[RMDB]
RNA sequence: GGGAACGACUCGAGUAGAGUCGAAAAGCAUCCCUGUAGUCCCAGCUACUUGGGAGCCUGAGGCAGGAGAAUCACUUGAACCCGGGAGGUGGAGGUUGUGGUGAGCUGAGAUUCUACCAUUGCACUCAUCGGAGGAAGCAUUCGUGCUUCCUCCGAUAAAAGAAACAACAACAACAAC
Reactivity to DMS in 0.01 (KOAc 150mM, MgCl2 10mM, bicine 150mM(pH8.5), 24C), signal-to-noise 1, nucleotides 027 to 126: g100c170a120u010c020c000c000u000g020u000a050g000u020c030c010c090a100g010c030u020a030c050u000u060g020g000g000a080g010c090c030u010g000a100g010g000c020a070g020g010a100g010a070a050u010c070a090c050u000u000g000a100a100c050c030c030g020g000g000a060g000g030u020g010g020a110g010g010u000u010g020u000g010g040u000g000a080g010c060u000g000a120g010a060u000u010c050u000a140c040c030a090u020u000g020c010a110c080u000c070